[RMDB]
RNA sequence: GGGAACGACUCGAGUAGAGUCGAAAACAAGCGCGUUUUGUGCACAGGAUGUUUGGAGGGACGAAGCGCGAGAGGUCAGCGGCAGCGUAGGUCGCCUCCUGUGCGGCCGCCGGGAUGUUGCCUGGCGUCUAGUGAUGGGGUUCGCUCCGUCGCUAGAAAAAGAAACAACAACAACAAC
Reactivity to 2A3 in 0.01 (KOAc 150mM, MgCl2 10mM, bicine 150mM(pH8.5), 24C), signal-to-noise 9, nucleotides 027 to 126: c030a020a030g050c010g000c010g020u010u010u030u070g050u060g000c010a000c010a010g020g010a050u070g160u140u150u140g120g030a080g010g020g000a000c000g010a030a020g000c000g000c010g010a020g000a000g010g040u040c010a010g020c010g040g000c010a030g000c040g050u090a070g000g040u010c010g020c000c010u030c000c000u010g010u020g000c000g000g000c010c010g000c010c010g060g020g040a140u100g020u040u030g020c010c000u010g010g010c010g020
Reactivity to DMS in 0.01 (KOAc 150mM, MgCl2 10mM, bicine 150mM(pH8.5), 24C), signal-to-noise 9, nucleotides 027 to 126: c050a100a100g010c040g010c030g010u000u000u010u010g020u010g010c020a030c040a040g000g000a080u030g010u010u020u030g010g010a090g010g000g000a050c010g010a060a070g010c020g000c020g000a090g000a080g010g010u010c030a060g000c040g000g000c020a100g010c070g010u020a080g010g010u000c050g010c020c020u000c020c020u000g010u010g010c010g000g000c070c010g010c020c010g000g010g000a070u010g000u000u000g000c030c010u010g000g000c020g010

The record gives the reactivity of an RNA of 177 nucleotides to 2A3 and DMS. The 2A3 profile rests on 47,073 reads. In probing experiments dimethyl sulfate is read out at A N1 and C N3, which are open when not base-paired. It was measured as part of the RMDB library OK1LIB.